[RMDB]
RNA sequence: GGGAACGACUCGAGUAGAGUCGAAAAUGGGACUACGAUGACGUUCCACGAUGUGCACGCACGGAAAUCACCGCCUUCUUUCCGUUGGCCGUGGCUGCUGUGUCCUUGGCGUGGCUCCUAGUGUCUUCGAUAAAGAGCUACUGUGCUAGCACCAAGCGUACGAUGUGAGCUUCGGCUCACAUCGUACAAAAGAAACAACAACAACAAC
Reactivity to 2A3 in 0.01 (KOAc 150mM, MgCl2 10mM, bicine 150mM(pH8.5), 24C), signal-to-noise 1, nucleotides 027 to 156: u090g030g000g030a030c040u050a010c070g180a090u100g080a040c030g000u010u000c010c010a090c060g070a190u100g030u040g000c000a000c090g010c000a000c040g040g000a060a000a050u140c060a090c020c090g010c010c040u060u090c020u050u170u000c060c050g000u010u060g040g000c010c000g010u010g030g030c090u060g000c000u030g080u000g080u080c080c000u070u120g000g000c070g000u010g040g010c000u000c000c000u060a100g080u010g000u160c000u000u030c030g080a070u060a060a080a040g020a000g040c010u050a080c060u060g000u020g050c020u020a030g000c030a000c070c010a010a060g090c040
This 207-nucleotide RNA was probed chemically with 2A3. For 2A3 the reverse transcriptase was SuperScript II with manganese. The RNA was probed in 150 mM KOAc, 10 mM MgCl2 and 150 mM bicine (pH 8.5) at 24 C. The data come from the RNA Mapping Database (RMDB), library OK3TST.